[RMDB]
RNA sequence: GGGAACGACUCGAGUAGAGUCGAAAACAUGGUGUUCACAACAGCGGCAAACGAUGAGUCACCCAUGAUCGUGCGGCUUGCCUUUGACACCGUUGAGAAGAUCGUGCGUGAGCACUUUGACUACAUCUGUGGUCUCACAGUUCGCUGUGAGACCACAAAAAGAAACAACAACAACAAC
Reactivity to DMS in 0.01 (KOAc 150mM, MgCl2 10mM, bicine 150mM(pH8.5), 24C), signal-to-noise 2, nucleotides 027 to 126: c060a060u010g020g030u000g020u020u000c020a040c090a090a090c100a130g000c040g000g000c020a050a060a060c100g000a040u020g000a090g000u000c010a090c050c030c030a180u000g010a050u010c060g040u000g020c050g020g000c040u010u020g020c030c070u000u000u000g010a080c000a030c010c000g010u010u020g010a140g020a110a030g000a080u000c060g010u000g010c140g020u000g000a140g000c020a030c010u000u000u030g000a120c060u000a080c050a130u010c190
Reactivity to 2A3 in 0.01 (KOAc 150mM, MgCl2 10mM, bicine 150mM(pH8.5), 24C), signal-to-noise 1, nucleotides 027 to 126: c000a000u040g060g000u010g000u050u020c020a010c000a110a010c000a050g030c000g050g000c020a040a000a000c030g130a100u090g040a040g050u050c010a050c000c050c010a030u060g040a100u070c060g040u040g010c010g030g000c070u040u060g000c010c040u080u080u100g080a090c030a020c020c020g010u000u080g080a140g030a150a030g060a080u060c040g000u020g080c090g000u050g010a000g040c000a010c000u050u000u040g040a030c040u050a040c040a150u060c070